[RMDB]
RNA sequence: GGGAACGACUCGAGUAGAGUCGAAAACUGGCCUUGGCGUGGGCUGCCGCGGUGGUCGCGGCGCAGUGCUGGUUGCCGCAGGUGCACUUGCAGCCGGCGCAUUCCGAUCACCCCUUGGCAACAUCGGCGAUAAUCGUGAGUUCGCUCACGAUUAUCGAAAAGAAACAACAACAACAAC
Reactivity to DMS in 0.01 (KOAc 150mM, MgCl2 10mM, bicine 150mM(pH8.5), 24C), signal-to-noise 3, nucleotides 027 to 126: c040u020g020g020c030c010u000u040g010g000c240g060u020g000g000g000c070u020g010c000c060g040c300g010g020u000g010g010u050c020g010c170g010g010c060g010c070a150g050u010g010c030u000g020g030u000u020g040c020c300g000c160a060g020g020u060g010c030a140c160u000u030g030c000a020g010c040c000g020g010c000g000c000a060u040u000c120c060g020a100u040c000a030c010c010c010c030u000u000g000g030c010a090a090c130a090u020c060g010g000
Reactivity to 2A3 in 0.01 (KOAc 150mM, MgCl2 10mM, bicine 150mM(pH8.5), 24C), signal-to-noise 7, nucleotides 027 to 126: c040u040g070g020c000c010u040u110g070g000c040g030u050g010g030g000c060u080g000c020c020g010c020g040g040u160g040g070u160c010g000c040g030g000c020g000c020a020g010u060g040c010u050g010g040u020u070g030c030c050g050c080a070g030g180u280g080c080a070c120u060u150g000c000a010g020c020c000g040g000c010g000c020a050u120u020c030c010g020a050u050c030a040c000c040c000c030u040u130g020g010c010a020a030c050a100u170c040g040g000

Source: RMDB library OK1LIB, as collected in RNAgym. Structure probing data (DMS and 2A3) for a 177-nucleotide construct. The RNA was probed in 150 mM KOAc, 10 mM MgCl2 and 150 mM bicine (pH 8.5) at 24 C. For DMS, 3,251 sequencing reads were counted. For 2A3 the reverse transcriptase was SuperScript II with manganese.